RNA sequence: GGGAACGACUCGAGUAGAGUCGAAAAGAUAUGGAAGAUAGGGAGAGGUUAUGCUGUCCCGAAGAACAUUCUCGGAAACGAGAAUGGGAGGGAUCAGCAUAACCUCGAAGAACUAUCUUCCUAAGUCGAUUUAAUACGUGUUCGCACGUAUUAAAUCAAAAGAAACAACAACAACAAC
Reactivity to DMS in 0.01 (KOAc 150mM, MgCl2 10mM, bicine 150mM(pH8.5), 24C), signal-to-noise 3, nucleotides 027 to 126: g020a120u000a300u010g000g010a000a010g000a020u000a000g010g020g000a100g010a010g010g000u000u000a000u000g010c010u000g010u000c000c000c000g000a080a160g010a180a210c000a000u000u000c010u010c000g010g000a090a160a220c000g010a010g010a020a010u000g000g000g010a100g010g010g000a010u010c040a010g020c000a000u000a010a010c000c000u000c000g000a020a070g000a100a200c000u000a010u000c010u000u000c000c000u000a020a100g000u000c100
Reactivity to 2A3 in 0.01 (KOAc 150mM, MgCl2 10mM, bicine 150mM(pH8.5), 24C), signal-to-noise 2, nucleotides 027 to 126: g050a060u210a060u190g000g010a000a000g010a000u010a010g030g000g020a030g000a000g010g000u010u010a000u010g000c000u010g000u000c010c000c010g070a150a020g000a010a010c010a000u000u000c000u000c000g030g050a130a100a060c010g000a010g000a010a010u010g000g010g020a030g010g000g010a080u300c040a000g000c000a010u010a010a010c000c000u010c000g000a000a000g000a000a000c010u000a010u000c020u000u010c000c000u000a070a020g080u050c060